[RMDB]
RNA sequence: GGGAACGACUCGAGUAGAGUCGAAAAUGGCUUGCAGGGUCCCGUGCCCCUGGGGAGUGACCACCGUCCCCUGUUUCUUCUUGGUGGGCGGGGGCGGUUUGGCUUCCAUGGUUAGAAGCGGCGGCGAACAGAGAGAGAUAUUCGUAUCUCUCUCUGUAAAAGAAACAACAACAACAAC
Reactivity to DMS in 0.01 (KOAc 150mM, MgCl2 10mM, bicine 150mM(pH8.5), 24C), signal-to-noise 7, nucleotides 027 to 126: u010g010g010c040u010u000g020c040a070g010g010g010u000c030c040c040g010u000g010c060c030c020c040u000g010g000g010g000a070g010u000g000a170c140c130a080c020c010g010u000c000c010c000c010u000g020u000u000u010c040u010u010c150u000u010g020g010u010g010g000g020c030g010g010g000g010g010c010g000g000u000u000u000g010g010c030u000u000c010c020a100u000g010g010u010u010a100g010a090a100g000c030g010g010c060g000g010c090g010a150
Reactivity to 2A3 in 0.01 (KOAc 150mM, MgCl2 10mM, bicine 150mM(pH8.5), 24C), signal-to-noise 3, nucleotides 027 to 126: u050g050g000c020u000u070g030c020a010g060g030g050u070c030c030c010g020u040g000c000c000c000c010u020g000g030g020g000a030g040u070g070a120c020c020a030c040c000g160u200c030c000c020c010u020g050u030u100u070c040u100u030c020u090u170g160g010u090g030g030g020c010g000g010g000g000g000c030g010g000u000u040u030g020g000c000u020u000c010c000a050u110g070g020u100u170a060g030a120a010g020c030g030g000c030g000g000c050g030a020
The data come from the RNA Mapping Database (RMDB), library OK2TST. Chemical mapping of a 177-nucleotide RNA with DMS and 2A3. 2A3 adducts were read by reverse transcription with SuperScript II with manganese. For DMS, 21,466 sequencing reads were counted.